[RMDB]
RNA sequence: GGGAACGACUCGAGUAGAGUCGAAAAUAACAUCGUAGUGUAAGACGAAAAGACAACGUCGCUUGCCAGCAGGACCACCAAAGGAAUACGCUUCGGUAACUACUCGAGAUCCCAAGCGAUAACACAAAGUUAACUUGGAAUUCGUUCCAAGUUAACUAAAAGAAACAACAACAACAAC
Reactivity to 2A3 in 0.01 (KOAc 150mM, MgCl2 10mM, bicine 150mM(pH8.5), 24C), signal-to-noise 5, nucleotides 027 to 126: u070a020a020c030a070u080c040g060u050a080g030u040g040u140a070a050g060a060c020g060a030a070a030a080g120a020c050a100a010c130g030u020c010g000c050u030u070g060c010c010a010g040c030a020g020g070a020c000c010a030c020c030a090a070a020g060g010a070a060u070a070c050g020c030u020u020c010g000g010u040a120a100c000u000a000c000u000c020g000a000g020a040u010c000c000c010a000a000g030c030g080a050u090a090a120c100a010c040a160a130
Reactivity to DMS in 0.01 (KOAc 150mM, MgCl2 10mM, bicine 150mM(pH8.5), 24C), signal-to-noise 4, nucleotides 027 to 126: u000a060a120c120a060u010c040g020u000a050g010u010g020u010a080a080g000a070c040g010a060a060a060a070g010a100c070a030a090c060g020u000c020g010c080u000u010g000c050c040a070g000c080a070g010g000a070c040c010a050c040c050a050a090a100g000g000a110a090u000a070c090g010c070u010u000c020g000g000u000a080a130c000u000a000c000u000c000g000a020g010a080u000c010c000c010a090a060g000c120g010a030u010a050a030c110a080c140a060a050
Chemical mapping of a 177-nucleotide RNA with 2A3 and DMS. For DMS, 3,327 sequencing reads were counted. The RNA was probed in 150 mM KOAc, 10 mM MgCl2 and 150 mM bicine (pH 8.5) at 24 C.